[RMDB]
RNA sequence: GGGAACGACUCGAGUAGAGUCGAAAAUCUAUUGCCUCAGUUCUCGUCGGCAAUCUGGAUCGGCUGCUGCUGAUAGAUGCUCUCCAGCACCCCCUUCUCGAACACGGUCCAAGGCCAGGGGGCCUUGCAUGUCGUACUUGUUCGCAAGUACGACAUGAAAAGAAACAACAACAACAAC
Reactivity to 2A3 in 0.01 (KOAc 150mM, MgCl2 10mM, bicine 150mM(pH8.5), 24C), signal-to-noise 3, nucleotides 027 to 126: u060c020u040a100u010u080g030c000c000u070c060a070g020u100u040c070u040c060g110u030c030g020g020c010a030a050u050c070u080g070g010a070u070c030g030g000c020u030g010c010u030g010c020u040g100a070u070a110g050a020u120g030c000u020c010u030c030c030a020g020c010a070c020c000c000c010c020u050u020c040u000c010g030a070a020c070a020c120g040g040u080c020c010a010a020g010g010c020c010a070g110g030g040g030g000c000c000u010u020g000
Reactivity to DMS in 0.01 (KOAc 150mM, MgCl2 10mM, bicine 150mM(pH8.5), 24C), signal-to-noise 5, nucleotides 027 to 126: u020c040u010a060u010u000g010c020c010u000c100a120g000u010u010c060u000c060g020u000c120g000g000c050a030a060u000c130u010g010g000a060u000c070g010g000c020u010g010c080u010g020c040u000g010a090u010a070g010a090u010g020c080u000c040u010c060c040a060g020c070a190c020c000c000c010c040u000u000c030u010c030g010a060a070c120a090c100g010g010u010c090c010a030a020g010g000c020c020a260g020g000g020g010g010c010c000u000u010g000